[RMDB]
RNA sequence: GGGAACGACUCGAGUAGAGUCGAAAACAGUUCCUUCGGAAUCGGUAGUCAAUCCUAUUUCCGAUAGGGGCAGUUGACAAUUGAAUCCGAUUUUGACCAUUAUUUUCAUAUCCGUAAUAGUGCGAAAAAACGUUCAGCAUUUCGAUGCUGAACGUUUAAAAGAAACAACAACAACAAC
Reactivity to DMS in 0.01 (KOAc 150mM, MgCl2 10mM, bicine 150mM(pH8.5), 24C), signal-to-noise 2, nucleotides 027 to 126: c170a210g010u030u000c000c000u000u000c010g000g010a080a000u000c020g020g030u000a010g010u040c020a030a000u060c000c000u000a000u000u010u050c120c100g000a070u010a000g000g000g000g010c120a300g050u000u000g020a000c050a070a070u000u030g000a020a160u000c020c000g000a090u010u000u040u010g010a280c300c000a030u000u010a020u000u020u000u010c050a140u050a050u070c300c190g020u000a030a030u000a000g000u010g020c010g030a000a040a010
Reactivity to 2A3 in 0.01 (KOAc 150mM, MgCl2 10mM, bicine 150mM(pH8.5), 24C), signal-to-noise 4, nucleotides 027 to 126: c040a010g030u010u000c000c000u000u000c000g000g000a020a010u010c010g040g020u040a040g050u050c000a000a240u300c000c000u020a020u060u150u040c050c100g000a000u050a020g000g000g020g020c100a110g040u010u010g030a050c010a080a210u050u180g040a080a050u050c020c030g060a100u070u010u010u180g080a040c030c000a020u020u040a050u030u090u110u120c120a110u080a140u220c060c050g060u030a030a020u010a100g080u070g080c120g040a130a000a000